[RMDB]
RNA sequence: GGGAACGACUCGAGUAGAGUCGAAAAGAAGACCAAUUGUCUUUGACAAUUGUAUCCGCAUUACGACAGGUUGUGAGCGGACGCUCCUAGGGAGUGUCUUUUCCUCACAACCUUAGGCGGACUAUAAUGCGGACACCUAGGGUGUCCUGGGAACGGAGGGGUAGCAGGUAUUCGUGCUUGUUACUCCAAAAGAAACAACAACAACAAC
Reactivity to 2A3 in 0.01 (KOAc 150mM, MgCl2 10mM, bicine 150mM(pH8.5), 24C), signal-to-noise 2, nucleotides 027 to 156: g040a010a000g050a000c000c010a010a010u030u010g000u000c020u020u080u260g000a000c010a010a020u020u000g000u020a070u000c000c000g000c010a010u030u080a050c010g050a010c020a030g000g000u000u000g000u000g000a000g000c030g000g000a000c000g000c000u000c000c000u130a090g100g080g010a000g020u000g000u000c010u020u000u050u010c000c000u000c000a000c000a000a000c000c000u000u000a000g000g010c010g000g020a000c010u030a030u000a040a050u080g010c040g010g000a000c000a000c000c030u090a070g000g050g000u000g020u030c000c000u000g040g000g010a070a050c030g020g020a040
Reactivity to DMS in 0.01 (KOAc 150mM, MgCl2 10mM, bicine 150mM(pH8.5), 24C), signal-to-noise 4, nucleotides 027 to 156: g000a050a060g000a090c050c040a100a100u000u010g010u000c020u000u000u010g010a060c060a080a060u000u010g020u000a030u000c010c000g000c020a260u000u000a050c000g020a160c090a060g020g020u000u000g030u000g000a050g070c150g000g000a010c000g010c010u000c000c030u000a150g040g030g020a070g030u000g010u000c010u000u000u010u010c100c010u020c010a010c000a010a010c000c000u010u000a010g000g020c040g030g020a090c130u010a110u000a030a020u000g020c000g000g010a030c010a000c000c020u010a060g000g010g010u000g020u000c010c010u000g010g010g010a190a160c100g010g020a300
Chemical mapping of a 207-nucleotide RNA with 2A3 and DMS. The reactions ran in a buffer of 150 mM KOAc, 10 mM MgCl2 and 150 mM bicine (pH 8.5), at 24 C. 2A3 adducts were read by reverse transcription with SuperScript II with manganese. The DMS profile rests on 12,180 reads. The data come from the RNA Mapping Database (RMDB), library OK3TST.